RNA sequence: GGGAACGACUCGAGUAGAGUCGAAAACAUGGUGGCAAGUACGACGCGAUAUUGCCCCACCUGCAAUAGAAGCGUAGACAUCAACUGUAGCGAGAGCUACUCAACUUAUGGACCUUAGAGCAAGCGAAGACGACAGGUCCUGUCGGAAUUCGCUAGACGUAGGCUAUCAUUUCGAUGAUAGCCUACGAAAAGAAACAACAACAACAAC
Reactivity to DMS in 0.01 (KOAc 150mM, MgCl2 10mM, bicine 150mM(pH8.5), 24C), signal-to-noise 2, nucleotides 027 to 156: c010a060u000g000g020u000g100g020c050a090a140g030u040a090c080g000a060c050g020c020g030a290u010a010u010u010g020c000c030c000c270a070c080c000u000g020c030a070a070u000a020g000a160a220g000c030g030u000a050g010a130c080a200u000c010a020a040c040u000g030u000a100g040c000g000a290g010a300g010c010u020a000c020u000c070a080a140c070u000u000a100u010g000g010a080c030c020u000u010a100g000a100g040c010a120a100g030c020g040a200a080g010a100c040g020a060c080a050g000g000u040c080c030u050g000u010c010g020g010a050a240u010u000c020g050c050u010a060g000a230
Reactivity to 2A3 in 0.01 (KOAc 150mM, MgCl2 10mM, bicine 150mM(pH8.5), 24C), signal-to-noise 3, nucleotides 027 to 156: c060a100u090g020g020u050g020g010c060a070a000g050u120a100c130g030a030c030g020c030g070a070u010a030u030u000g010c000c040c000c000a090c010c050u040g000c000a030a020u020a040g090a150a020g060c010g020u000a020g040a100c030a070u090c050a060a080c090u090g010u020a000g000c010g010a020g010a020g080c010u010a000c000u020c040a040a170c040u110u130a060u130g040g030a070c020c000u080u070a040g010a030g120c040a090a000g000c010g000a000a010g000a050c000g000a000c000a030g140g060u090c060c040u000g030u000c010g020g000a120a060u010u000c000g000c000u020a030g010a010
Source: RMDB library OK3TST, as collected in RNAgym. Chemical mapping of a 207-nucleotide RNA with DMS and 2A3. Conditions: 150 mM KOAc, 10 mM MgCl2 and 150 mM bicine (pH 8.5), 24 C. For 2A3 the reverse transcriptase was SuperScript II with manganese.